[RMDB]
RNA sequence: GGGAACGACUCGAGUAGAGUCGAAAAGAUAUGGACUUAGGGAGACCUCUGGUCGGAAACGACCAACGUGAGGUCUUUGAUCUAAGGUCCUAAGUCAAAGCUCUGCAAAGUUCGCUUUGCAGAGCAAGGGUAGGAAUAUGUUCGCAUAUUCCUACCCAAAAGAAACAACAACAACAAC
Reactivity to 2A3 in 0.01 (KOAc 150mM, MgCl2 10mM, bicine 150mM(pH8.5), 24C), signal-to-noise 2, nucleotides 027 to 126: g020a020u070a050u180g000g010a000c010u000u000a000g040g000g030a030g030a000c000c010u010c060u060g000g000u020c010g000g000a060a060a000c020g010a010c030c030a050a090c220g300u160g010a000g000g000u000c000u010u000u010g010a000u000c000u020a030a000g110g050u020c000c010u010a110a010g040u030c040a160a080a030g000c000u000c010u020g000c000a010a000a010g010u100u120c220g070c140u030u000u000g000c010a000g030a000g020c000a010a000
Reactivity to DMS in 0.01 (KOAc 150mM, MgCl2 10mM, bicine 150mM(pH8.5), 24C), signal-to-noise 4, nucleotides 027 to 126: g000a070u000a300u020g000g000a170c010u000u000a020g010g000g000a020g010a020c010c000u000c010u000g010g000u000c000g000g010a080a100a150c000g010a010c000c010a040a110c290g000u020g020a010g010g020u000c010u000u000u010g000a070u010c010u000a040a020g010g010u010c000c000u000a040a110g000u000c050a090a140a160g020c010u000c000u000g000c000a000a010a020g000u010u020c280g010c000u010u000u000g000c000a010g000a010g020c010a000a010

This 177-nucleotide RNA was probed chemically with 2A3 and DMS. Values cover nucleotides 27 to 126. The reactions ran in a buffer of 150 mM KOAc, 10 mM MgCl2 and 150 mM bicine (pH 8.5), at 24 C. 2A3 is a SHAPE reagent: it acylates the 2'-hydroxyl of flexible nucleotides of all four kinds. The 2A3 profile rests on 4,405 reads. 2A3 adducts were read by reverse transcription with SuperScript II with manganese.